Record summary:
This 177-nucleotide RNA was probed chemically with 2A3. Values cover nucleotides 27 to 126.
RNA sequence: GGGAACGACUCGAGUAGAGUCGAAAAGGCUAGUUGUGUGAAUAGUGAUUCGGGAUGGUUUGCGGAGUAAUCUGUGGAUUGUGCUAUAAUUGCUAUUUGUGAAUAUGCAACAGCCUGGGUUAAAUAUCCCUACCGUCGAUUUCGAUCGACGGUAGGGAAAAGAAACAACAACAACAAC
Reactivity to 2A3 in 0.01 (KOAc 150mM, MgCl2 10mM, bicine 150mM(pH8.5), 24C), signal-to-noise 1, nucleotides 027 to 126: g000g000c000u080a070g000u000u010g000u040g030u070g100a000a000u000a000g000u010g000a020u100u000c300g000g000g070a000u030g000g090u000u000u000g050c000g080g020a000g000u140a110a300u000c000u000g070u000g000g020a000u000u000g000u070g030c000u000a010u160a300a040u010u000g000c000u050a000u000u000u020g120u030g160a090a220u300a080u250g000c010a000a000c000a000g000c000c000u000g070g000g010u000u000a150a000a000u050a020u000